[RMDB]
RNA sequence: GGGAACGACUCGAGUAGAGUCGAAAAGUGCACUGGGGUCAGCAUAGAUACUUGUGUGUACGUAUAUUUGUGGUUUUUGUUAUUUUUCUACUUAUAGAUGGCUAAAAUCUGAGUUUGAAAGGUGGCCUCUAUCUUAGAACUUCGGUUCUAAGAUAGAAAAAGAAACAACAACAACAAC
Reactivity to DMS in 0.01 (KOAc 150mM, MgCl2 10mM, bicine 150mM(pH8.5), 24C), signal-to-noise 6, nucleotides 027 to 126: g010u000g010c010a010c010u010g000g000g000g010u020c020a140g010c220a130u020a100g010a050u010a070c020u000u010g010u010g020u000g020u000a020c030g020u020a080u020a070u010u000u000g010u000g000g000u000u000u010u000u000g010u000u000a150u010u000u000u000u000c000u000a020c070u000u010a100u020a030g010a030u010g010g010c090u010a050a040a080a050u000c010u000g010a100g010u010u030u020g000a040a060a030g000g020u000g000g010c030c130
Reactivity to 2A3 in 0.01 (KOAc 150mM, MgCl2 10mM, bicine 150mM(pH8.5), 24C), signal-to-noise 5, nucleotides 027 to 126: g010u020g000c030a000c030u010g010g010g000g020u040c030a030g040c090a180u210a140g050a020u210a300c050u110u090g090u020g010u000g000u170a010c030g070u040a100u000a070u140u050u150g050u040g010g040u000u000u010u010u060g010u030u020a020u010u050u000u000u000c010u020a060c050u090u080a080u040a220g030a040u090g050g000c080u150a110a110a050a050u000c020u030g020a030g130u080u250u190g070a030a030a000g010g010u020g040g000c000c000